Source: RMDB library TTRINS, as collected in RNAgym. This 177-nucleotide RNA was probed chemically with DMS. The RNA was probed in 150 mM KOAc, 10 mM MgCl2 and 150 mM bicine (pH 8.5) at 24 C.
RNA sequence: GGGAACGACUCGAGUAGAGUCGAAAAGAUAUGGAAGGGUUGCAGCGCUCAUCGAUCGUACUGGAUAACCAUUCGGAAACGAAUGGCUAAUACAGUACGGGAGAGCGUCUGCAACCCUUCCUAAGUCCAGAUCACAAAGGUUCGCCUUUGUGAUCUGAAAAGAAACAACAACAACAAC
Reactivity to DMS in 0.01 (KOAc 150mM, MgCl2 10mM, bicine 150mM(pH8.5), 24C), signal-to-noise 2, nucleotides 027 to 126: g010a100u010a300u000g010g020a010a050g010g030g000u000u000g000c010a010g000c000g010c000u000c000a300u010c160g020a120u010c010g010u000a010c000u010g000g020a030u000a130a160c000c000a030u000u010c000g010g000a100a110a210c000g000a030a000u010g030g000c010u000a110a090u000a120c000a030g000u010a000c000g000g020g000a030g010a010g020c020g000u020c010u010g010c010a000a000c000c000c000u000u000c000c000u000a020a100g010u000c030